An RNA of 207 nucleotides, treated with 2A3 and DMS and read out base by base.
The RNA was probed in 150 mM KOAc, 10 mM MgCl2 and 150 mM bicine (pH 8.5) at 24 C.
For 2A3 the reverse transcriptase was SuperScript II with manganese.
Reactivities are given for positions 27 through 156.
RNA sequence: GGGAACGACUCGAGUAGAGUCGAAAAUUGGCGAAUGCCUGUGGAUCUACAUUUGUUGCGGGUUCGAGACCCGUCAGAGCCCGGCUCUGUAGCUCAAUAGUAGAGCGGUGUAUUCACAUAAACUUGUAAAAGACACGUGCCUUCGGGCACGUGUCAAGACAAAUGUUCUGUUCGCAGAACAUUUGUCAAAAGAAACAACAACAACAAC
Reactivity to 2A3 in 0.01 (KOAc 150mM, MgCl2 10mM, bicine 150mM(pH8.5), 24C), signal-to-noise 2, nucleotides 027 to 156: u070u030g010g000c090g110a180a010u300g020c000c010u040g030u000g000g020a020u000c050u090a020c020a020u060u070u090g010u020u030g010c000g000g010g000u010u030c020g020a040g010a030c000c000c000g000u000c000a010g010a010g000c150c300c080g110g000c010u000c000u000g040u030a000g010c000u020c030a020a070u150a190g200u070a020g010a000g000c000g000g000u010g000u010a010u030u030c000a000c010a030u220a090a100a080c020u080u130g050u120a080a110a020a000g010a000c000a010c020g000u000g000c020c000u060u110c210g040g000g000c080a000c000g010u010g000u000c000a000a000
Reactivity to DMS in 0.01 (KOAc 150mM, MgCl2 10mM, bicine 150mM(pH8.5), 24C), signal-to-noise 1, nucleotides 027 to 156: u000u000g010g010c020g000a050a010u000g020c000c010u000g000u000g010g000a080u000c040u000a050c020a080u000u000u000g000u010u010g000c000g010g000g000u000u010c090g030a300g010a110c000c040c020g040u000c030a080g010a160g020c010c070c080g030g050c010u000c020u000g020u020a130g040c030u000c010a070a150u000a110g030u000a090g000a020g020c000g000g010u010g020u000a100u000u000c070a010c040a100u000a050a090a120c080u000u000g010u010a040a060a150a110g020a020c000a000c030g040u000g000c010c020u000u010c300g040g030g060c020a000c000g030u000g010u000c000a020a030